[RMDB]
Structure probing data (2A3) for a 177-nucleotide construct. The 2A3 profile rests on 430 reads.

RNA sequence: GGGAACGACUCGAGUAGAGUCGAAAAACGUUUACCAUUCAUUCAACAAUAUUGUAUUCUAUAAGGUAAACAGCACACUUUGUAGCAAAUACUUAUUUUAGGCUUCAUUAUAAAUAUAGCAAUAUUGUCACGAGCUGGGAUUCGUCCCAGCUCGUGAAAAAGAAACAACAACAACAAC
Reactivity to 2A3 in 0.01 (KOAc 150mM, MgCl2 10mM, bicine 150mM(pH8.5), 24C), signal-to-noise 2, nucleotides 027 to 126: a010c080g000u060u070u070a200c070c070a090u110u270c030a030u090u070c010a090a070c000a160a000u030a000u020u020g040u010a100u000u210c040u090a170u130a100a000g010g000u020a090a000a120c050a060g080c050a080c020a050c210u060u120u050g040u030a000g020c050a070a060a070u030a130c180u200u190a090u300u220u020u050a080g000g010c010u020u090c130a060u090u300a190u030a150a070a070u300a050u130a110g020c000a000a030u000a000u000u010g040